An RNA of 177 nucleotides, treated with 2A3 and DMS and read out base by base. Reactivities are given for positions 27 through 126. Conditions: 150 mM KOAc, 10 mM MgCl2 and 150 mM bicine (pH 8.5), 24 C. For DMS the reverse transcriptase was MarathonRT. The DMS profile rests on 30,639 reads. Source: RMDB library OK2TRN, as collected in RNAgym.
RNA sequence: GGGAACGACUCGAGUAGAGUCGAAAACAGCACCUGGGACCCAACAGAGACCAGCUUCUAGCAGCUAAGGAGGCCGUUCAGCUGUGACGAAGGCCUGAAGCACAGGAUUAGGACUGAAGCGAUGAUGACUGUAGGAAAGAUUCGUCUUUCCUACAGUAAAAGAAACAACAACAACAAC
Reactivity to 2A3 in 0.01 (KOAc 150mM, MgCl2 10mM, bicine 150mM(pH8.5), 24C), signal-to-noise 7, nucleotides 027 to 126: c020a000g050c030a030c030c020u020g020g040g030a050c030c020c000a030a030c030a060g080a000g040a110c020c020a020g020c010u030u000c020u040a040g010c030a010g000c020u060a070a050g100g030a050g050g100c040c010g060u050u020c020a030g000c020u040g030u050g070a020c080g020a040a010g040g010c000c000u030g030a050a010g040c040a020c020a080g000g060a090u080u140a050g010g040a020c020u030g020a060a010g040c040g050a080u120g020a040u160g050
Reactivity to DMS in 0.01 (KOAc 150mM, MgCl2 10mM, bicine 150mM(pH8.5), 24C), signal-to-noise 9, nucleotides 027 to 126: c080a080g020c050a080c050c020u000g020g010g010a110c040c020c030a080a120c110a070g000a120g000a090c070c050a090g010c020u000u000c030u000a250g010c030a050g000c030u000a090a110g010g010a070g010g010c040c040g010u000u000c090a070g010c020u000g010u000g000a120c160g000a070a070g000g000c030c020u000g000a060a090g010c050a090c060a040g000g010a100u000u000a070g010g010a090c030u000g000a060a070g010c050g010a060u000g010a110u000g000